[RMDB]
RNA sequence: GGGAACGACUCGAGUAGAGUCGAAAACACGAGCACCGGCGAACUCGUCGAGCACGCGGCCGCCGCGGCCAGGGAAGCCUUGGCCGCCGACGAUCUCGACGCGGCCGAGGUGGUGCUGAUCUGCGGACUGGUUUUAGUCGUUCGCGACUAAAACCAGAAAAGAAACAACAACAACAAC
Reactivity to DMS in 0.01 (KOAc 150mM, MgCl2 10mM, bicine 150mM(pH8.5), 24C), signal-to-noise 1, nucleotides 027 to 126: c090a090c070g000a050g020c000a050c020c030g040g000c020g000a140a130c090u020c030g020u000c010g000a070g040c200a090c120g010c070g010g020c010c060g020c110c040g020c130g000g040c090c000a060g010g010g020a160a080g000c000c000u000u000g030g000c020c060g000c040c020g000a110c060g000a130u000c070u000c000g030a160c120g010c080g000g000c050c000g020a010g000g030u010g010g030u000g000c000u000g020a060u000c040u020g000c060g000g000a140

Source: RMDB library OK2TST, as collected in RNAgym.
Chemical mapping of a 177-nucleotide RNA with DMS.
DMS (dimethyl sulfate) methylates the pairing face of unpaired adenines and cytosines.
Reactivities are given for positions 27 through 126.
For DMS the reverse transcriptase was MarathonRT.
The reactions ran in a buffer of 150 mM KOAc, 10 mM MgCl2 and 150 mM bicine (pH 8.5), at 24 C.